[RMDB]
RNA sequence: GGGAACGACUCGAGUAGAGUCGAAAACGCGGUGACAGCGAUUUCACCGUCCCCGUGGGUGAUGGCGUUGUCGAGCACGGCGGUGAGGAUUCGGCGCAGGUGGUCCGGAUCGAUCGAGACGAACAGGGAUCCUGCGCUGGUUCGCCAGCGCAGGAUCAAAAGAAACAACAACAACAAC
Reactivity to 2A3 in 0.01 (KOAc 150mM, MgCl2 10mM, bicine 150mM(pH8.5), 24C), signal-to-noise 1, nucleotides 027 to 126: c070g000c030g000g090u060g000a000c040a010g080c240g020a080u250u040u000c000a000c000c000g020u020c010c000c000c000g050u200g020g020g060u050g000a110u030g000g000c000g040u020u110g040u160c170g010a030g020c050a020c110g000g020c040g000g000u140g040a110g030g000a050u150u000c000g010g010c040g010c020a060g020g010u050g040g010u000c080c000g010g000a030u040c040g000a080u020c010g070a010g050a030c020g000a220a130c000a040g060g060